[RMDB]
RNA sequence: GGGAACGACUCGAGUAGAGUCGAAAACAUUCUUGAAAAAGUGAUGUAGAUUUAUAGCCCAUAACUUUUUUGAAUUACAUCGACGAUACGGCGUCGAACGAAAAAUAAAUAGACCGUAUGAAAGAAAAAAACAACAGUAGCUUCGGCUACUGUUGAAGAAUGAUGGUAAGUUCGCUUACCAUCAUUCAAAAGAAACAACAACAACAAC
Reactivity to 2A3 in 0.01 (KOAc 150mM, MgCl2 10mM, bicine 150mM(pH8.5), 24C), signal-to-noise 2, nucleotides 027 to 156: c000a000u040u000c000u020u030g000a010a010a010a010a000g010u020g020a000u020g040u050a110g050a180u080u290u130a140u230a160g010c030c000c000a040u130a020a030c060u130u010u000u000u060u190g140a110a080u200u120a100c070a080u020c000g000a000c000g000a020u000a020c000g000g010c000g000u010c000g000a010a010c020g030a010a000a010a090a090u090a010a040a020u050a020g110a030c000c010g000u000a010u020g020a010a050a080g040a040a080a000a000a020a000a010c010a000a000c010a020g000u000a000g020c000u040u040c260g050g010c000u000a000c000u000g000u000u000g000a010a000
Background
The record gives the reactivity of an RNA of 207 nucleotides to 2A3. The 2A3 profile rests on 1,087 reads. The RNA was probed in 150 mM KOAc, 10 mM MgCl2 and 150 mM bicine (pH 8.5) at 24 C. For 2A3 the reverse transcriptase was SuperScript II with manganese.